[RMDB]
RNA sequence: GGGAACGACUCGAGUAGAGUCGAAAAUCUUCGGAAUCUUUCUCUGCUUGCGCUGCCAACUUUGCUUUCUCGCGUUCGGUCAAUAUCCGCUUGACGGCCUUCACGAUGAACAUAUCGAUUCCGCUGACAGACAGCUCAAUUUCGAUUGAGCUGUCUGAAAAGAAACAACAACAACAAC
Reactivity to 2A3 in 0.01 (KOAc 150mM, MgCl2 10mM, bicine 150mM(pH8.5), 24C), signal-to-noise 2, nucleotides 027 to 126: u010c010u070u080c040g060g000a080a020u000c030u040u050u060c020u010c000u030g040c050u080u060g010c060g010c040u010g020c030c010a060a080c060u080u070u080g030c000u030u020u030c040u000c010g020c040g040u080u050c040g020g050u040c000a050a010u000a040u160c020c030g020c050u000u050g040a070c040g070g000c010c010u060u050c050a060c050g030a070u090g050a110a020c070a070u140a020u090c070g060a070u060u000c000c010g120c080u010g020a050
Reactivity to DMS in 0.01 (KOAc 150mM, MgCl2 10mM, bicine 150mM(pH8.5), 24C), signal-to-noise 2, nucleotides 027 to 126: u000c020u000u020c060g030g010a070a080u000c020u000u000u000c020u000c040u000g020c130u010u010g010c050g040c020u000g020c030c050a060a100c070u000u000u000g020c090u010u000u010c030u000c050g000c050g000u000u000c070g020g020u000c030a070a090u000a100u000c090c030g030c160u000u020g000a120c100g010g010c070c030u000u000c040a090c040g000a050u010g000a110a080c110a060u010a100u000c070g000a170u010u000c030c000g000c110u000g010a220
An RNA of 177 nucleotides, treated with 2A3 and DMS and read out base by base. The 2A3 profile rests on 1,675 reads. DMS adducts were read by reverse transcription with MarathonRT.